[RMDB]
RNA sequence: GGGAACGACUCGAGUAGAGUCGAAAAUACAUUUUCAAAUCGAAGAAGAUGAAGAAACACCAGAAACAUCACCAUCACAACAGAAUGAAUUCGUUGAGGAGGUUGGGGAUGAUUCUAAUUUGAAUGACUCGUCUUAAGUGUUCGCACUUAAGACGAGAAAAGAAACAACAACAACAAC
Reactivity to 2A3 in 0.01 (KOAc 150mM, MgCl2 10mM, bicine 150mM(pH8.5), 24C), signal-to-noise 2, nucleotides 027 to 126: u030a010c010a010u020u000u020u080c140a200a200a250u270c150g120a040a000g000a030a010g000a160u030g000a060a060g060a090a120a000c060a010c030c020a000g000a000a000a000c000a010u000c000a010c020c000a000u030c010a020c000a040a040c050a080g080a030a110u080g100a170a240u160u030c030g030u030u000g050a160g200g070a050g060g140u010u050g030g070g000g010a010u010g010a000u020u070c030u000a060a140u120u090u130g160a130a110u100g060a030
Reactivity to DMS in 0.01 (KOAc 150mM, MgCl2 10mM, bicine 150mM(pH8.5), 24C), signal-to-noise 1, nucleotides 027 to 126: u000a170c070a030u000u000u000u010c000a020a120a160u010c070g040a150a200g030a030a000g000a020u010g010a110a130g010a090a120a100c110a070c110c020a010g000a000a070a150c040a040u010c010a060c020c000a060u000c010a110c000a010a070c010a050g050a000a100u010g000a080a160u010u020c020g000u000u000g000a110g000g070a060g030g000u000u000g020g010g000g020a000u000g000a070u000u000c020u000a110a070u000u010u000g000a070a040u010g030a200

The record gives the reactivity of an RNA of 177 nucleotides to 2A3 and DMS.
Source: RMDB library OK2TRN, as collected in RNAgym.
The reactions ran in a buffer of 150 mM KOAc, 10 mM MgCl2 and 150 mM bicine (pH 8.5), at 24 C.
The DMS profile rests on 728 reads.